The data come from the RNA Mapping Database (RMDB), library OK2TRN.
An RNA of 177 nucleotides, treated with DMS and 2A3 and read out base by base.
For 2A3 the reverse transcriptase was SuperScript II with manganese.
Values cover nucleotides 27 to 126.
The DMS profile rests on 3,519 reads.
DMS adducts were read by reverse transcription with MarathonRT.
Conditions: 150 mM KOAc, 10 mM MgCl2 and 150 mM bicine (pH 8.5), 24 C.

[RMDB]
RNA sequence: GGGAACGACUCGAGUAGAGUCGAAAACGGCGGCACUGAGAGACGCCUCUAGCGAAAUCGUAGAAAAAUUUUCUGAGGGUUUGGAUGUGAACUCUAUCACCCACUCCACCGAUUCUGCGUUUUCAAAACUCUAUCUUUACUUCGGUAAAGAUAGAGUAAAAGAAACAACAACAACAAC
Reactivity to DMS in 0.01 (KOAc 150mM, MgCl2 10mM, bicine 150mM(pH8.5), 24C), signal-to-noise 4, nucleotides 027 to 126: c160g010g010c010g000g000c050a080c080u010g000a250g010a150g010a060c030g000c010c010u000c100u000a120g010c160g010a010a020a010u000c010g010u000a040g000a010a060a120a140a150u010u020u000u000c070u010g020a100g020g010g000u000u010u000g020g010a160u010g010u000g000a050a110c230u020c190u010a110u010c010a050c020c010c000a030c050u000c000c010a050c050c040g000a110u000u000c020u000g010c020g000u000u000u000u010c000a070a100a120
Reactivity to 2A3 in 0.01 (KOAc 150mM, MgCl2 10mM, bicine 150mM(pH8.5), 24C), signal-to-noise 4, nucleotides 027 to 126: c040g020g030c000g010g040c070a020c150u140g070a040g010a020g020a170c030g020c070c000u050c080u070a080g040c070g030a020a020a010u000c020g010u020a010g070a040a040a070a150a190u160u200u170u110c150u200g100a160g050g020g000u050u100u070g050g010a130u200g010u030g030a030a030c080u050c040u300a150u110c020a030c000c000c000a010c010u000c000c000a110c020c030g020a020u020u000c000u050g020c000g010u030u000u000u010c000a070a040a020